RNA sequence: GGGAACGACUCGAGUAGAGUCGAAAAUUUUGAGGAAACGUCGUUAGCUCGGCAACAAUUGUUCUCUUUCGAUGAGUUUGUUCAAAAUACUAUGCAAGAAAUUGUUGAUGAUGAUUCCACUUUAACUCUAGAUCAAUAUGCACAACACACGGGUGCAAGUAAUUAUUAAUUUCGAUUAAUAAUUACUAAAAGAAACAACAACAACAAC
Reactivity to 2A3 in 0.01 (KOAc 150mM, MgCl2 10mM, bicine 150mM(pH8.5), 24C), signal-to-noise 5, nucleotides 027 to 156: u020u020u020u040g010a010g000g050a030a010a010c010g020u010c000g000u020u020a020g000c090u030c200g060g010c060a080a040c070a160a210u170u130g020u160u070c030u010c000u010u020u030c030g020a050u040g020a040g110u030u060u050g280u090u040c000a030a010a000a010u040a070c110u120a060u170g070c040a060a030g040a110a200a060u060u030g020u040u040g020a090u010g010a010u030g020a060u120u070c010c020a060c070u090u100u090a120a050c010u050c040u070a040g040a120u100c030a050a030u110a020u230g020c060a010c010a070a120c010a040c030a050c200g150g070g030u040g030c020a010
Reactivity to DMS in 0.01 (KOAc 150mM, MgCl2 10mM, bicine 150mM(pH8.5), 24C), signal-to-noise 3, nucleotides 027 to 156: u000u000u010u010g010a130g000g000a030a040a040c050g000u000c010g050u000u000a040g020c110u000c060g010g030c030a070a150c080a140a180u010u000g030u000u000c040u000c010u000u000u000c060g020a070u000g020a140g040u000u000u000g010u000u020c040a030a040a040a060u000a050c050u010a080u000g020c070a100a100g010a090a090a080u000u010g020u000u000g010a100u000g020a070u010g010a150u000u000c010c020a080c060u000u010u000a040a120c090u000c070u000a090g000a080u000c050a050a110u010a110u000g000c000a050c020a080a080c100a090c100a100c080g010g010g030u000g040c000a050
An RNA of 207 nucleotides, treated with 2A3 and DMS and read out base by base. Source: RMDB library OK3TST, as collected in RNAgym. Values cover nucleotides 27 to 156.